[RMDB]
RNA sequence: GGGAACGACUCGAGUAGAGUCGAAAAGCGCGGCGAAGAGGUCGUUUUCCAACUGGUCCGCGACAACGGCGUCGAGGCACCGAACCUGAACGCCGAUGGCAAGCCAUCCCAGCAGGGAUACACCACCGAGGCGGUCUGGCGGACGUUGCGAAUCCUCCUGCUUAAGGUGAUUCGUCACCUUAAGCAGAAAAGAAACAACAACAACAAC
Reactivity to 2A3 in 0.01 (KOAc 150mM, MgCl2 10mM, bicine 150mM(pH8.5), 24C), signal-to-noise 1, nucleotides 027 to 156: g050c040g000c010g070g010c050g080a190a020g010a110g080g050u160c100g020u000u010u050u090c040c000a000a050c040u130g080g060u040c000c000g000c030g000a000c040a070a030c000g010g060c010g010u020c080g100a110g000g000c020a070c190c130g030a150a140c000c000u040g070a020a030c040g040c010c020g040a050u010g020g100c090a000a200g010c000c030a030u000c030c020c020a090g030c070a070g000g000g000a000u010a150c090a050c030c030a050c040c040g050a060g050g010c040g030g020u040c100u180g030g000c020g000g030a040c030g010u050u090g030c060g020a000a030u000c000c000u000c010
Chemical mapping of a 207-nucleotide RNA with 2A3.
The 2A3 profile rests on 574 reads.
The data come from the RNA Mapping Database (RMDB), library OK3TST.
For 2A3 the reverse transcriptase was SuperScript II with manganese.
The RNA was probed in 150 mM KOAc, 10 mM MgCl2 and 150 mM bicine (pH 8.5) at 24 C.